Conditions: 150 mM KOAc, 10 mM MgCl2 and 150 mM bicine (pH 8.5), 24 C.
Structure probing data (2A3 and DMS) for a 177-nucleotide construct.
It was measured as part of the RMDB library OK2TRN.
For DMS, 1,272 sequencing reads were counted.
Reactivities are rounded to 0.1 and cut off at 0 and 3.
RNA sequence: GGGAACGACUCGAGUAGAGUCGAAAAAUGGCUGCGACUGGGUGACUGCGGAAGGGUGCUCAGCUGUGAAAUAAUGAAUGAGUUGAUUUGAUGGAGAUGAGCUAAAAUCGACUGACCUCCUGCUACCGGGAUAUCGGAAAUUCGUUUCCGAUAUCCCAAAAGAAACAACAACAACAAC
Reactivity to 2A3 in 0.01 (KOAc 150mM, MgCl2 10mM, bicine 150mM(pH8.5), 24C), signal-to-noise 1, nucleotides 027 to 126: a000u020g020g000c030u070g000c020g050a010c070u040g010g060g040u070g080a100c040u090g050c040g010g060a040a030g160g000g000u100g000c010u020c010a010g000c040u010g010u000g050a120a030a030u190a070a110u170g040a070a090u090g020a080g050u060u020g050a060u080u090u020g090a070u080g020g000a080g010a170u120g060a010g000c010u030a040a020a000a070u030c020g010a050c040u000g010a010c010c020u020c000c010u000g020c000u060a120c000c000
Reactivity to DMS in 0.01 (KOAc 150mM, MgCl2 10mM, bicine 150mM(pH8.5), 24C), signal-to-noise 1, nucleotides 027 to 126: a060u010g020g000c010u000g000c090g010a080c030u000g010g030g010u000g010a090c090u000g010c060g020g020a080a080g020g000g000u000g020c040u000c030a030g010c050u000g010u020g010a070a090a110u000a080a130u000g000a050a060u000g000a030g000u000u000g000a060u000u000u010g010a110u000g010g010a100g010a070u000g000a100g010c030u010a040a000a040a030u000c030g010a050c020u000g000a120c130c030u000c010c000u010g000c070u010a110c180c140
For DMS the reverse transcriptase was MarathonRT.